[RMDB]
RNA sequence: GGGAACGACUCGAGUAGAGUCGAAAAGCAUUAAGAGAGUACUCUUAUUCCCACAACGUUGGUGACAACGUUGAUUUUCCGGUGGCCACCCGCCCGGGCCACCGUUACUCCACUCCACUCCUUCGGGACUGGUUUGGAGGAACAGUGCAGGGCUAAAGUAUCCGAAAAUCUUCGGAUUUUCGGAUACAAAAGAAACAACAACAACAAC
Reactivity to 2A3 in 0.01 (KOAc 150mM, MgCl2 10mM, bicine 150mM(pH8.5), 24C), signal-to-noise 1, nucleotides 027 to 156: g020c020a050u070u110a000a010g000a010g020a050g180u180a210c010u010c000u020u010a020u070u000c000c020c000a020c010a000a000c000g010u000u000g010g010u150g080a020c000a000a010c000g020u000u010g050a070u110u060u190u080c090c000g020g030u000g000g040c000c010a020c040c170c120g000c000c000c000g000g030g000c000c000a000c000c000g010u000u060a010c000u020c000c020a010c000u000c020c000a000c020u030c000c010u040u070c160g050g000g000a010c010u010g000g000u000u000u000g000g000a000g000g010a010a040c030a020g080u040g130c030a050g000g000g000c010u010a000a000a010
This 207-nucleotide RNA was probed chemically with 2A3.